[RMDB]
RNA sequence: GGGAACGACUCGAGUAGAGUCGAAAAAUGUUGUUCUGUCUGUUUCCAUAGCUUAUAUUGUAAGGUACUUAUAAGCUCGUGAACAACAGGCAGGACAACUGAAAAGUAUGUGAGUUCGCUCACAUACGUAUGCCAUAACGUUCGCGUUAUGGCAUACAAAAGAAACAACAACAACAAC
Reactivity to DMS in 0.01 (KOAc 150mM, MgCl2 10mM, bicine 150mM(pH8.5), 24C), signal-to-noise 3, nucleotides 027 to 126: a090u010g000u000u000g010u000u000c000u010g020u000c010u000g010u000u000u010c190c010a040u000a020g020c000u000u000a010u000a010u010u000g020u000a110a210g010g010u000a020c040u010u000a010u000a000a010g000c000u000c170g070u000g000a020a050c240a020a010c000a000g000g000c000a010g000g010a000c000a010a000c010u000g000a040a070a060a140g020u000a000u000g010u010g000a020g030u000u010c270g010c000u000c000a000c000a000u000a000c010
Reactivity to 2A3 in 0.01 (KOAc 150mM, MgCl2 10mM, bicine 150mM(pH8.5), 24C), signal-to-noise 4, nucleotides 027 to 126: a000u080g010u000u000g000u000u010c000u000g000u000c000u000g020u000u010u000c040c010a040u050a010g010c000u010u000a010u010a030u060u100g040u110a230a250g270g080u090a060c020u010u010a010u000a010a000g000c010u020c080g070u070g000a020a000c020a000a010c000a010g010g000c000a000g010g000a000c010a000a000c000u000g010a000a010a010a040g010u010a010u000g010u000g000a010g000u020u140c210g040c060u000c000a000c000a000u000a000c010